[RMDB]
Chemical mapping of a 207-nucleotide RNA with DMS and 2A3. For DMS the reverse transcriptase was MarathonRT. For DMS, 8,724 sequencing reads were counted. For 2A3 the reverse transcriptase was SuperScript II with manganese. The 2A3 profile rests on 5,665 reads.
RNA sequence: GGGAACGACUCGAGUAGAGUCGAAAAUUUGCGCGGGUGUGUGGCUGAAAAUAAUGUUUUUGAAGACUGCAUUUGCGGCCUUCUGCCUCAAUACGCCACAACAACCUCACCUAAUGGCUUGGCCGGUAGCGUCAUUCAGGCGGGCUCAACAUACGGAACGUAAAACUAAGUUCGCUUAGUUUUACGUAAAAGAAACAACAACAACAAC
Reactivity to DMS in 0.01 (KOAc 150mM, MgCl2 10mM, bicine 150mM(pH8.5), 24C), signal-to-noise 3, nucleotides 027 to 156: u000u010u010g020c060g030c050g020g040g020u010g020u010g020u020g010g000c010u000g000a080a080a080a130u000a090a140u010g020u000u000u000u010u020g010a060a030g010a030c010u000g000c010a300u000u000u010g040c020g000g010c000c020u000u010c020u000g000c090c050u000c070a050a140u010a130c110g010c010c020a040c020a060a050c030a030a050c010c000u010c040a040c040c020u000a050a100u000g010g020c020u000u000g030g040c030c040g040g020u000a130g020c090g010u010c060a050u000u000c070a040g020g040c030g030g000g020c040u010c050a060a080c040a100u010a110c060g000g020a110
Reactivity to 2A3 in 0.01 (KOAc 150mM, MgCl2 10mM, bicine 150mM(pH8.5), 24C), signal-to-noise 7, nucleotides 027 to 156: u080u090u130g050c060g000c090g020g020g000u020g000u000g010u010g000g000c020u050g080a040a050a030a030u270a040a080u130g100u070u100u100u130u090g030a020a020g010a010c000u020g000c060a190u050u120u300g010c000g010g010c000c000u010u020c020u060g040c010c010u040c020a000a040u080a050c050g000c000c000a010c000a060a050c020a040a050c020c000u040c030a090c010c010u070a130a090u100g000g000c000u020u070g110g000c020c020g070g020u080a030g020c020g060u040c080a060u140u080c050a010g010g000c000g030g000g000c040u050c080a060a110c020a070u200a070c080g080g040a070